[RMDB]
RNA sequence: GGGAACGACUCGAGUAGAGUCGAAAAUGGAAUCCCAGCCAAGGCCGGUGGAUCACCUGAGGUCAGGUGUUCGAGACCAGUCUGGCCAACAUGGUGAAACCCCUGUCUCUACUAAAAAUACAAAAAUUACCGGGCGUGGUGGCGGGUGCCUGUAAUAAAUGGCAUUAUUAUUCGUAAUAAUGCCAUUAAAAGAAACAACAACAACAAC
Reactivity to 2A3 in 0.01 (KOAc 150mM, MgCl2 10mM, bicine 150mM(pH8.5), 24C), signal-to-noise 1, nucleotides 027 to 156: u090g040g070a070a060u050c000c020c000a000g020c010c010a070a020g030g080c040c040g000g110u250g020g050a030u000c000a020c000c000u020g000a040g060g040u060c000a040g040g010u040g100u170u140c090g050a060g100a170c070c030a020g050u040c000u000g010g000c000c000a020a020c050a090u130g020g000u000g020a000a120a000c010c000c000c010u020g020u020c000u010c010u070a090c030u100a030a040a010a080a120u140a060c060a090a000a010a110a150u130u060a060c000c110g070g020g000c020g030u040g000g000u020g000g040c080g000g010g000u000g010c000c020u020g020u060a080a080u110a130
Reactivity to DMS in 0.01 (KOAc 150mM, MgCl2 10mM, bicine 150mM(pH8.5), 24C), signal-to-noise 1, nucleotides 027 to 156: u000g020g000a130a120u000c000c000c000a250g000c010c030a140a120g000g010c000c090g040g060u000g050g020a300u010c010a030c000c040u000g010a150g050g010u000c010a010g050g000u000g000u010u000c000g000a210g010a130c130c010a060g010u000c030u020g000g000c020c010a010a140c060a230u000g000g010u010g010a030a090a070c010c000c000c020u020g020u000c010u010c030u000a090c060u020a000a030a040a050a100u000a120c070a010a020a030a060a120u000u000a050c000c070g030g030g000c030g020u010g010g040u010g000g030c070g000g030g000u000g000c010c000u000g010u000a030a100u000a110

Background: An RNA of 207 nucleotides, treated with 2A3 and DMS and read out base by base. High 2A3 reactivity points to a flexible backbone, as in loops and unpaired stretches. It was measured as part of the RMDB library OK3TST.